An RNA of 207 nucleotides, treated with 2A3 and DMS and read out base by base. The DMS profile rests on 3,718 reads. For 2A3, 3,002 sequencing reads were counted. It was measured as part of the RMDB library OK3TST.

RNA sequence: GGGAACGACUCGAGUAGAGUCGAAAAUCAACGUGCCUAGUCUUCCUAUUCGUGACGUGUUACAGGAAAUUAAGUACUGCUACCGUAAUGGAUUUGAGGGCUAUGUUUUCGUACCAGAAUACUGUCGUGACCUAGUUGAUUGCGAUCGUAAGGAUCAGAAGUGGCAUAUAUUCGUAUAUGCCACUUCAAAAGAAACAACAACAACAAC
Reactivity to 2A3 in 0.01 (KOAc 150mM, MgCl2 10mM, bicine 150mM(pH8.5), 24C), signal-to-noise 5, nucleotides 027 to 156: u130c040a020a060c040g080u070g040c010c010u010a010g000u000c010u010u000c000c000u000a020u000u030c030g010u020g040a010c010g180u220g020u220u060a010c010a010g000g110a020a040a080u300u220a300a000g020u010a000c000u000g020c020u010a000c000c000g000u010a000a030u020g020g000a000u000u000u040g010a000g000g000g010c000u000a010u020g030u000u070u050u090c040g020u060a060c000c020a040g090a170a050u070a100c040u050g020u030c010g010u010g050a060c010c010u030a060g020u020u060g080a300u030u060g010c030g010a010u000c000g100u160a150a140g170g010a020u050c030a020
Reactivity to DMS in 0.01 (KOAc 150mM, MgCl2 10mM, bicine 150mM(pH8.5), 24C), signal-to-noise 2, nucleotides 027 to 156: u010c070a140a070c060g060u000g040c040c070u010a000g020u000c000u020u000c030c010u000a070u010u010c030g040u000g000a040c020g000u010g020u000u000a030c020a020g000g020a150a180a230u010u000a100a100g020u010a200c010u000g010c010u000a050c030c030g000u010a030a050u010g010g020a030u000u000u000g010a030g070g000g010c020u000a030u010g010u000u010u000u010c020g000u000a220c070c030a150g010a180a190u000a060c030u040g000u010c020g000u010g000a300c000c000u000a210g000u000u010g010a080u020u000g010c020g000a040u000c100g020u000a080a200g010g010a090u000c040a160